[RMDB]
RNA sequence: GGGAACGACUCGAGUAGAGUCGAAAAGCCGCUGGCGGUGCCUGGACACGACCGCGGGACCUAUUUCAUCGAUCUCGCCAGGGUCUGGCAGUCGCUGCCCGCCGCCAAGCGAGACCCGGCCCGCGGAGGAUCUAACCAAUUUCGAUUGGUUAGAUCCAAAAGAAACAACAACAACAAC
Reactivity to DMS in 0.01 (KOAc 150mM, MgCl2 10mM, bicine 150mM(pH8.5), 24C), signal-to-noise 2, nucleotides 027 to 126: g020c060c000g000c010u010g000g010c000g030g000u000g000c050c030u010g010g000a100c140a120c110g020a150c000c000g000c000g000g000g020a070c010c010u000a060u030u040u010c120a110u020c100g000a110u060c140u000c170g000c030c030a060g010g020g000u020c120u040g000g030c000a010g000u030c130g020c050u000g000c010c020c030g000c000c000g020c000c000a030a090g010c000g000a060g000a120c020c000c000g010g000c000c000c040g000c020g000g000a160
Reactivity to 2A3 in 0.01 (KOAc 150mM, MgCl2 10mM, bicine 150mM(pH8.5), 24C), signal-to-noise 7, nucleotides 027 to 126: g040c020c010g000c000u010g010g010c010g000g000u010g010c010c010u020g020g010a060c040a010c170g120a060c000c000g000c020g010g010g020a110c010c030u110a200u070u230u150c150a190u110c090g160a090u060c050u050c130g030c010c010a020g000g000g040u110c100u030g010g000c010a020g110u300c180g030c220u020g000c000c000c010g000c000c000g000c000c000a050a020g000c000g000a040g010a050c010c000c000g010g000c010c000c000g000c010g000g000a010